This 177-nucleotide RNA was probed chemically with DMS. Values cover nucleotides 27 to 126. The data come from the RNA Mapping Database (RMDB), library RFM100.
RNA sequence: GGGAACGACUCGAGUAGAGUCGAAAAACAGGGUGGCGACAGUAAGUAUGAGUUUCAUUUUUUAGUCUCCUAUAAGAAAAAUAUAUUGACAAUAUAACUCUUCUAGCUGGUUUGACUUAUUGCCUCCCGAAUUGAACUUCUUCGGAAGUUCAAUUCGAAAAGAAACAACAACAACAAC
Reactivity to DMS in 0.01 (KOAc 150mM, MgCl2 10mM, bicine 150mM(pH8.5), 24C), signal-to-noise 2, nucleotides 027 to 126: a090c110a070g030g010g050u010g000g010c030g010a050c070a030g000u000a190a050g000u000a010u030g000a100g010u000u000u030c110a020u000u000u000u050u000u050a150g010u000c050u010c130c030u030a050u000a000a060g020a080a110a140a060a100u020a070u010a030u080u000g020a170c030a090a100u010a040u010a010a050c020u000c000u000u000c000u000a240g010c030u000g000g010u010u050u010g010a060c100u010u020a050u040u040g000c000c000u020c030c000